[RMDB]
RNA sequence: GGGAACGACUCGAGUAGAGUCGAAAAGAUAUGGAUUUCCAGCUUUGAUCAUGGCGUAACAUCGGUCGGAAACGACCGUGGCCAUGGGAGCUGGUAGUCCUAAGUCAAAUCCCACUUCGGUGGGAAACGUGGCAUUAAAGUUCGCUUUAAUGCCACGAAAAGAAACAACAACAACAAC
Reactivity to DMS in 0.01 (KOAc 150mM, MgCl2 10mM, bicine 150mM(pH8.5), 24C), signal-to-noise 3, nucleotides 027 to 126: g000a050u000a300u010g000g000a000u000u010u000c000c020a000g010c010u020u000u000g010a090u010c000a020u000g000g010c000g010u000a050a120c170a050u020c000g000g010u000c000g020g000a070a050a160c000g010a020c010c000g040u000g020g010c020c000a000u000g000g000g010a010g010c010u010g010g010u000a010g010u000c000c000u010a050a120g010u000c030a080a140a200u000c000c000c000a010c000u000u010c160g020g000u000g000g000g000a010a010a050
Reactivity to 2A3 in 0.01 (KOAc 150mM, MgCl2 10mM, bicine 150mM(pH8.5), 24C), signal-to-noise 2, nucleotides 027 to 126: g060a020u080a030u110g000g010a010u020u040u020c010c010a010g000c020u270u200u120g130a110u240c000a010u000g000g020c020g110u160a130a040c070a250u210c030g050g000u010c000g030g010a040a070a040c000g000a000c020c010g000u010g000g000c000c000a000u000g000g010g010a010g020c010u010g000g030u010a010g000u010c000c000u010a090a020g000u000c010a110a060a150u040c010c010c000a000c000u040u040c260g130g000u000g000g000g000a020a020a020

This 177-nucleotide RNA was probed chemically with DMS and 2A3.
The reactions ran in a buffer of 150 mM KOAc, 10 mM MgCl2 and 150 mM bicine (pH 8.5), at 24 C.
For DMS, 2,808 sequencing reads were counted.
As a SHAPE reagent, 2A3 marks flexible, mostly unpaired nucleotides at the ribose 2'-OH.
Values cover nucleotides 27 to 126.